Chemical mapping of a 177-nucleotide RNA with 2A3 and DMS.
The 2A3 profile rests on 1,924 reads.
The DMS profile rests on 1,781 reads.
Conditions: 150 mM KOAc, 10 mM MgCl2 and 150 mM bicine (pH 8.5), 24 C.
RNA sequence: GGGAACGACUCGAGUAGAGUCGAAAAGGCCAACAUAGUGAAACCUCAUCGCUACUAAAAAUAUAAAAACUUAGCCUGGCGUGGUGGCAGGCAUGUGUAAUCCCAGCAAUUUGGGAGGCUGAGGCAGCCAAUAUCCUUCCUUCGGGAAGGAUAUUGGAAAAGAAACAACAACAACAAC
Reactivity to 2A3 in 0.01 (KOAc 150mM, MgCl2 10mM, bicine 150mM(pH8.5), 24C), signal-to-noise 2, nucleotides 027 to 126: g020g030c020c000a000a050c030a100u120a040g050u040g050a120a100a040c000c020u000c000a020u060c010g030c000u040a050c010u060a150a050a030a120a040u150a030u060a120a130a010a000a020c010u000u040a020g040c020c010u010g080g010c050g070u080g080g050u020g020g040c010a000g030g030c020a020u090g040u000g040u020a050a040u000c010c000c000a030g020c070a050a210u110u070u110g020g000g000a020g000g030c010u030g000a010g010g090c020a010g030
Reactivity to DMS in 0.01 (KOAc 150mM, MgCl2 10mM, bicine 150mM(pH8.5), 24C), signal-to-noise 2, nucleotides 027 to 126: g030g000c000c030a020a090c140a070u000a030g000u000g000a070a040a120c010c010u010c010a080u010c030g020c030u000a030c060u020a030a060a020a060a070u020a040u010a080a060a030a160a070c150u010u000a100g010c040c050u000g020g030c060g030u010g010g000u010g010g010c010a000g010g020c020a030u000g000u000g010u000a050a070u000c000c000c020a070g000c170a040a100u000u000u010g030g000g010a060g000g040c050u000g010a050g000g010c090a080g000